[RMDB]
RNA sequence: GGGAACGACUCGAGUAGAGUCGAAAACGCUGAUCGAGCCCAGGUAGUAGCGACGACGGUCGGCGACCACCACCGGGUUGGCGUCCAGCGCGGUGUGCGCCAGCACCGCGUCGGCCUCAGCCGGAAAACUAUGAUCCUCAUUCGUGAGGAUCAUAGUAAAAGAAACAACAACAACAAC
Reactivity to 2A3 in 0.01 (KOAc 150mM, MgCl2 10mM, bicine 150mM(pH8.5), 24C), signal-to-noise 3, nucleotides 027 to 126: c010g000c020u010g000a030u030c020g010a020g070c010c000c050a040g100g050u100a080g030u060a020g070c060g100a090c030g020a010c020g060g000u010c020g010g020c010g030a040c010c040a040c030c000a040c010c010g180g020g000u040u020g020g010c050g050u040c030c000a020g010c020g000c010g000g000u010g010u040g020c090g090c020c010a020g000c010a000c010c000g000c000g010u020c020g000g010c000c000u040c000a010g020c010c000g010g000a050a140a000
Reactivity to DMS in 0.01 (KOAc 150mM, MgCl2 10mM, bicine 150mM(pH8.5), 24C), signal-to-noise 5, nucleotides 027 to 126: c040g010c020u000g000a020u010c020g010a230g000c020c010c030a150g000g010u010a080g010u000a100g010c060g000a040c050g010a190c070g010g000u000c020g000g010c000g010a190c070c040a080c100c080a170c030c010g000g000g010u010u000g000g020c230g010u010c010c010a060g000c020g020c010g020g010u000g000u010g000c100g010c090c080a110g010c030a010c010c000g010c010g020u000c070g010g000c020c020u000c030a060g020c010c020g000g000a090a040a080

Structure probing data (2A3 and DMS) for a 177-nucleotide construct. DMS adducts were read by reverse transcription with MarathonRT. For 2A3 the reverse transcriptase was SuperScript II with manganese. Reactivities are rounded to 0.1 and cut off at 0 and 3.